[RMDB]
RNA sequence: GGGAACGACUCGAGUAGAGUCGAAAAAAGAACCUCGCAACGAGGUAAGGUGGGACUUUUCCUUCUGGAACCAAGCGGUUGGUUCCGAGGGGGGUGUGAUCCAGGUACCGCCGUAGAAACUGGAUUACGACGUCUACCCGGGAUUCAAACCCGGUCCGUAUUAAUCCAGGUUCGCCUGGAUUAAUACAAAAGAAACAACAACAACAAC
Reactivity to 2A3 in 0.01 (KOAc 150mM, MgCl2 10mM, bicine 150mM(pH8.5), 24C), signal-to-noise 3, nucleotides 027 to 156: a000a030g100a020a000c000c000u030c000g060c130a160a150c170g000a010g000g000u020a000a080g040g010u100g020g050g020a030c020u140u090u050u050c010c000u020u020c140u210g010g000a000a000c000c000a000a010g030c050g110g090u040u030g000g000u000u000c000c010g000a010g000g020g000g000g020g020u080g000u010g010a000u000c000c000a000g010g000u020a030c000c040g010c020c030g020u070a010g070a050a250a010c010u010g000g000a010u000u010a010c060g030a010c060g050u020c030u030a120c000c000c000g020g010g020a080u230u190c080a110a030a070c010c000c000g030g020u040c050c050
Reactivity to DMS in 0.01 (KOAc 150mM, MgCl2 10mM, bicine 150mM(pH8.5), 24C), signal-to-noise 1, nucleotides 027 to 156: a070a050g000a150a040c010c010u000c000g000c150a200a180c100g000a050g000g000u000a000a020g040g030u020g000g010g020a070c060u000u010u020u020c000c000u000u000c040u040g100g020a020a020c000c010a030a160g000c210g030g020u000u000g020g020u000u000c240c010g000a090g000g050g020g060g060g000u030g050u000g000a060u000c000c000a060g000g000u030a120c100c000g010c010c070g020u000a110g000a090a110a180c080u010g010g010a190u000u020a100c000g050a060c040g010u000c030u010a090c300c020c000g000g020g010a170u030u020c170a100a170a110c010c000c000g030g000u000c110c030
Description: Chemical mapping of a 207-nucleotide RNA with 2A3 and DMS. The data come from the RNA Mapping Database (RMDB), library VIROID.